[RMDB]
RNA sequence: GGGAACGACUCGAGUAGAGUCGAAAACGAUCGAGGAUGAUCUACUGUAUGGAAUAUGGAUUGGAAGCCAACGUUAGAAACACUAGGGCUAAUGGGGUUCCUCGAGCCCUUCAAAUUCUUGAUGGAAAUCCCUCCUACGUUUCGACGUAGGAGGGAUAAAAGAAACAACAACAACAAC
Reactivity to 2A3 in 0.01 (KOAc 150mM, MgCl2 10mM, bicine 150mM(pH8.5), 24C), signal-to-noise 3, nucleotides 027 to 126: c020g020a030u050c020g000a020g070g020a110u100g060a050u070c010u060a060c080u150g140u250a160u190g040g070a080a120u120a050u190g060g070a070u070u180g090g010a030a010g040c000c000a000a020c060g040u060u060a090g110a110a090a010c070a020c140u040a030g010g070g000c010u070a000a110u160g020g000g050g060u090u150c000c000u070c000g000a000g000c000c000c000u020u000c030a070a110a050u040u010c020u060u130g080a110u100g080g040a160a030
Reactivity to DMS in 0.01 (KOAc 150mM, MgCl2 10mM, bicine 150mM(pH8.5), 24C), signal-to-noise 2, nucleotides 027 to 126: c190g000a070u000c020g000a030g000g010a160u000g000a040u010c060u040a020c050u020g020u030a080u000g000g020a080a120u040a020u040g000g030a120u010u020g020g000a070a140g000c030c010a010a090c030g010u020u000a060g000a130a090a110c100a140c290u040a050g010g000g010c000u000a070a020u010g050g010g000g000u020u010c070c000u000c010g000a030g000c040c000c000u040u000c110a000a080a120u000u000c010u000u000g040a040u000g000g000a020a100